[RMDB]
RNA sequence: GGGAACGACUCGAGUAGAGUCGAAAACAGACCAAGUUCGCUUGGUCUGAAAGAAUGCGGAAAGCACCAGGGAGGGAAGGUGCGGGCCGCAACCACCCAUAAAAAGUACGAUCUUCGGAUCGUACAACCUCUCUUUAUGGUUCGCCAUAAAGAGAGGAAAAGAAACAACAACAACAAC
Reactivity to DMS in 0.01 (KOAc 150mM, MgCl2 10mM, bicine 150mM(pH8.5), 24C), signal-to-noise 4, nucleotides 027 to 126: c010a000g000a010c000c000a000a000g020u000u020c220g030c010u000u000g000g010u000c000u000g010a040a080a080g000a110a160u000g010c000g000g000a040a060a220g000c000a010c000c000a160g030g010g040a090g000g000g010a170a190g000g000u000g010c000g030g000g010c000c000g000c000a000a060c210c110a190c000c000c010a140u040a040a070a050a100a130g000u000a010c000g000a000u000c000u000u030c250g020g000a000u000c000g010u000a000c010a050a050